[RMDB]
RNA sequence: GGGAACGACUCGAGUAGAGUCGAAAAGAGGCCUCACGGAGUCUACAGCAAGAGUCAGUGACGGAUUCAAAGAAGGGCCUUUGGCAAAAGGAAAUCCUCAGGUCUUUGGUCAGGUGAUCUGUCUGACAGUUUGAUACCGUUUCGACGGUAUCAAACUAAAAGAAACAACAACAACAAC
Reactivity to DMS in 0.01 (KOAc 150mM, MgCl2 10mM, bicine 150mM(pH8.5), 24C), signal-to-noise 2, nucleotides 027 to 126: g000a120g020g020c010c030u010c070a060c090g010g000a080g020u010c030u000a100c070a240g010c210a040a060g000a080g010u000c000a080g000u000g000a080c090g020g000a030u000u000c050a140a070a150g020a080a050g010g000g000c000c010u010u000u000g010g010c300a040a020a080a050g000g000a090a050a070u000c000c000u000c080a100g020g000u000c010u000u000u000g000g010u010c050a060g000g000u010g010a040u020c060u010g000u000c010u010g000a120c080

Record summary:
An RNA of 177 nucleotides, treated with DMS and read out base by base. DMS adducts were read by reverse transcription with MarathonRT. For DMS, 1,123 sequencing reads were counted. Reactivities are given for positions 27 through 126. The RNA was probed in 150 mM KOAc, 10 mM MgCl2 and 150 mM bicine (pH 8.5) at 24 C.